An RNA of 177 nucleotides, treated with DMS and read out base by base. Conditions: 150 mM KOAc, 10 mM MgCl2 and 150 mM bicine (pH 8.5), 24 C. For DMS, 1,313 sequencing reads were counted. It was measured as part of the RMDB library TTRDES.
[RMDB]
RNA sequence: GGGAACGACUCGAGUAGAGUCGAAAAAAAAGAUAUGGAGGAGCGGAGGAGCGAAGAACUAUGGUCAAGUAUGUCGGAAACGACAUACGUAGCCAUAGGGAGCUCGCCGCUCCUCCUAAGUCAAAAACGCUUUAAUAAUCUUCGGAUUAUUAAAGCGAAAAGAAACAACAACAACAAC
Reactivity to DMS in 0.01 (KOAc 150mM, MgCl2 10mM, bicine 150mM(pH8.5), 24C), signal-to-noise 1, nucleotides 027 to 126: a030a090a130a130g010a010u000a300u000g000g020a050g000g000a030g030c010g040g000a020g000g000a050g030c000g000a110a070g000a160a160c000u010a010u010g000g000u000c020a300a300g000u010a000u000g010u000c000g000g000a060a070a130c000g020a010c000a030u000a000c000g000u000a240g000c040c000a000u000a000g000g000g000a130g010c030u000c000g020c020c020g000c000u000c000c000u000c000c000u000a000a070g000u000c020a100a020a130a060a190